[RMDB]
RNA sequence: GGGAACGACUCGAGUAGAGUCGAAAAUAGCACCAAAGAGAAGAAUCUGACCCUAAAGGAACUUUUUGCUAAAUUAAAAAUGCAUCCUUAUGACCUGACUGUUGAUUCUCUGGAUGUUCAUGCUGUAGGUUGAAACGGCAAUGUCAGUUUCACUCUACCUAUAGUGACUCUUCGGAGUCACUAUAGGAAAAGAAACAACAACAACAAC
Reactivity to 2A3 in 0.01 (KOAc 150mM, MgCl2 10mM, bicine 150mM(pH8.5), 24C), signal-to-noise 3, nucleotides 027 to 156: u080a010g040c030a060c020c040a030a110a000g050a010g000a190a000g000a020a060u020c040u070g030a030c030c020c020u090a080a080a040g050g000a110a120c030u050u070u080u140u090g050c020u160a120a150a220u210u160a080a130a100a030a000u120g000c010a000u000c000c000u080u060a100u120g040a050c020c070u040g090a130c030u040g060u140u050g060a080u100u050c030u000c000u020g060g040a050u060g030u080u080c060a080u080g020c020u020g050u060a060g070g030u070u070g020a040a070a030c020g000g000c050a050a040u060g020u020c020a000g000u000u030u000c070a070c010u070c010u050a050
Reactivity to DMS in 0.01 (KOAc 150mM, MgCl2 10mM, bicine 150mM(pH8.5), 24C), signal-to-noise 1, nucleotides 027 to 156: u010a080g020c010a130c060c040a020a080a070g010a090g020a100a090g000a120a090u000c040u000g000a160c030c080c040u010a050a100a030g000g010a130a090c020u000u000u000u000u000g000c040u010a070a100a200u000u010a000a060a030a070a180u000g000c050a080u010c000c000u000u000a080u000g010a040c000c000u000g010a050c070u010g010u000u000g010a110u010u000c020u000c050u000g000g000a060u020g010u000u000c030a140u030g020c020u010g040u000a010g020g020u010u020g010a030a030a080c020g010g020c050a070a140u000g010u000c020a160g010u000u000u000c050a130c000u010c010u000a170

The record gives the reactivity of an RNA of 207 nucleotides to 2A3 and DMS. Conditions: 150 mM KOAc, 10 mM MgCl2 and 150 mM bicine (pH 8.5), 24 C. For DMS the reverse transcriptase was MarathonRT. The DMS profile rests on 2,025 reads.